[RMDB]
RNA sequence: GGGAACGACUCGAGUAGAGUCGAAAAUACCAAUGGUUCGCCAUUGGUACUUGUAUUGACGAAUAGUACCGUAGAAGUAUUCAGGUCUCAUAACUACGGAUAUACACUAGAGUUUCGACUCUAGUAAGCAUAUGCUCUGCUUCGGCAGAGCAUAUGCAAAAGAAACAACAACAACAAC
Reactivity to 2A3 in 0.01 (KOAc 150mM, MgCl2 10mM, bicine 150mM(pH8.5), 24C), signal-to-noise 1, nucleotides 027 to 126: u050a000c000c000a050a000u040g020g000u070u080c200g040c100c010a000u010u000g010g000u010a010c010u050u090g060u060a150u050u300g120a010c090g050a060a050u080a110g050u030a180c000c030g000u010a010g030a200a010g050u010a040u010u260c090a030g060g000u000c020u010c020a080u050a100a040c000u000a010c040g030g000a010u040a020u010a080c050a000c020u000a000g010a000g020u020u060u040c100g060a000c000u000c000u010a000g010u020a010a010
Reactivity to DMS in 0.01 (KOAc 150mM, MgCl2 10mM, bicine 150mM(pH8.5), 24C), signal-to-noise 1, nucleotides 027 to 126: u000a000c000c000a000a050u000g010g010u000u020c220g010c020c010a000u000u000g000g010u000a000c050u000u040g020u000a130u020u000g040a060c130g010a040a040u000a120g010u010a150c020c000g010u000a000g010a120a110g000u000a040u000u000c080a100g000g010u000c020u000c050a090u010a160a150c030u000a010c000g020g010a220u020a030u000a090c190a030c000u000a000g010a060g020u000u010u010c090g020a020c040u010c000u000a010g010u010a050a090
Conditions: 150 mM KOAc, 10 mM MgCl2 and 150 mM bicine (pH 8.5), 24 C. Chemical mapping of a 177-nucleotide RNA with 2A3 and DMS. For DMS the reverse transcriptase was MarathonRT. The DMS profile rests on 817 reads. 2A3 adducts were read by reverse transcription with SuperScript II with manganese.